Structure probing data (2A3 and DMS) for a 177-nucleotide construct. For 2A3, 4,809 sequencing reads were counted. The reactions ran in a buffer of 150 mM KOAc, 10 mM MgCl2 and 150 mM bicine (pH 8.5), at 24 C. 2A3 adducts were read by reverse transcription with SuperScript II with manganese. Reactivities are rounded to 0.1 and cut off at 0 and 3. For DMS the reverse transcriptase was MarathonRT.
[RMDB]
RNA sequence: GGGAACGACUCGAGUAGAGUCGAAAACAGACCGGCAAACCCUACCAGGUCAAGGGGCGCUGGUAUUACCCCAAGGAAGACAAGAACUAUACGGCGGUUGGCCGUGCUUCCUGGUAUGGUGAGGCCACACCGAGUAAUGAUUCGUCAUUACUCGGUGAAAAGAAACAACAACAACAAC
Reactivity to 2A3 in 0.01 (KOAc 150mM, MgCl2 10mM, bicine 150mM(pH8.5), 24C), signal-to-noise 3, nucleotides 027 to 126: c020a020g130a070c020c100g010g000c030a090a020a090c000c000c000u000a010c000c020a010g000g040u090c130a080a090g020g010g000g010c050g020c100u120g020g050u040a070u050u190a000c000c000c020c000a030a060g120g020a060a070g070a100c070a130a030g040a170a030c040u050a080u060a300c010g010g020c040g200g150u150u150g180g000c020c000g000u010g010c020u040u000c000c010u000g000g010u040a050u140g030g000u030g030a050g170g020c000c000a010
Reactivity to DMS in 0.01 (KOAc 150mM, MgCl2 10mM, bicine 150mM(pH8.5), 24C), signal-to-noise 5, nucleotides 027 to 126: c150a150g000a080c090c040g020g010c030a030a260a110c010c000c020u000a070c030c040a030g010g010u000c160a110a140g010g000g000g020c220g000c050u000g010g020u000a050u010u000a110c020c010c010c050a140a110g020g010a050a040g010a110c120a110a070g000a090a090c130u000a100u010a030c020g000g010c020g000g000u000u000g000g010c010c000g020u000g000c060u000u000c010c010u000g010g010u000a020u000g010g020u010g010a200g010g010c010c020a250